[RMDB]
This 177-nucleotide RNA was probed chemically with 2A3. The reactions ran in a buffer of 150 mM KOAc, 10 mM MgCl2 and 150 mM bicine (pH 8.5), at 24 C. Reactivities are given for positions 27 through 126. For 2A3 the reverse transcriptase was SuperScript II with manganese.
RNA sequence: GGGAACGACUCGAGUAGAGUCGAAAACCACCUGUUGAGGUCUUUCUUCUGAAACAAAGAAGAAAUAGACAAAUCAGACUUGCCCUCUUGGAAAUGUGGUCCAGAUUUCUCUACUCCCAAGCUCCAAAAUGCAAAAUCGCUUCGGCGAUUUUGCAUUAAAAGAAACAACAACAACAAC
Reactivity to 2A3 in 0.01 (KOAc 150mM, MgCl2 10mM, bicine 150mM(pH8.5), 24C), signal-to-noise 1, nucleotides 027 to 126: c000c020a000c010c030u040g040u050u060g080a110g040g040u040c000u010u050u000c000u030u020c000u000g130a060a150a130c050a050a080a000g000a000a000g000a040a000a000u190a000g000a050c000a000a110a000u010c030a020g060a100c020u030u010g010c030c000c000u060c000u000u030g070g000a060a130a100u040g000u010g000g010u010c050c100a000g030a060u000u140u030c030u000c000u010a030c000u060c000c030c000a000a010g020c010u020c020c010a100a080